[RMDB]
RNA sequence: GGGAACGACUCGAGUAGAGUCGAAAAGCGCUCGGGUGAGUUAGAUUCCGAUUGUCUGAUCCGAUCCCGGGAUCGUGAUCUCGUCGCGUCCGAUCUAAAAUGUGGCCCGGUCGAAGUGGUGCCACGCAAACGUUGUAAAGUUCGCUUUACAACGUUUAAAAGAAACAACAACAACAAC
Reactivity to DMS in 0.01 (KOAc 150mM, MgCl2 10mM, bicine 150mM(pH8.5), 24C), signal-to-noise 9, nucleotides 027 to 126: g010c060g020c100u000c030g010g010g020u010g000a190g010u010u000a060g010a060u000u000c050c050g010a080u000u010g010u010c070u010g010a070u010c100c030g010a050u010c130c080c040g010g010g000a020u000c010g020u000g010a100u000c040u000c060g010u000c100g010c060g010u000c030c030g000a070u010c070u010a070a060a080a090u010g010u000g000g000c010c010c010g010g000u010c190g010a110a160g020u010g010g000u010g000c010c010a020c030g010c270
Reactivity to 2A3 in 0.01 (KOAc 150mM, MgCl2 10mM, bicine 150mM(pH8.5), 24C), signal-to-noise 6, nucleotides 027 to 126: g030c020g020c060u030c030g040g020g010u050g030a100g030u070u170a030g010a050u070u020c030c030g020a030u060u170g050u040c110u120g060a100u030c050c030g020a050u050c030c030c000g040g000g010a020u010c000g030u070g010a020u010c030u000c020g050u030c030g010c010g030u000c010c010g000a060u010c020u170a120a110a110a130u250g000u000g010g000c000c010c020g050g050u120c110g090a100a030g100u110g090g050u180g000c010c010a010c010g010c010
Conditions: 150 mM KOAc, 10 mM MgCl2 and 150 mM bicine (pH 8.5), 24 C. Structure probing data (DMS and 2A3) for a 177-nucleotide construct. Reactivities are given for positions 27 through 126. For 2A3, 10,656 sequencing reads were counted. For 2A3 the reverse transcriptase was SuperScript II with manganese.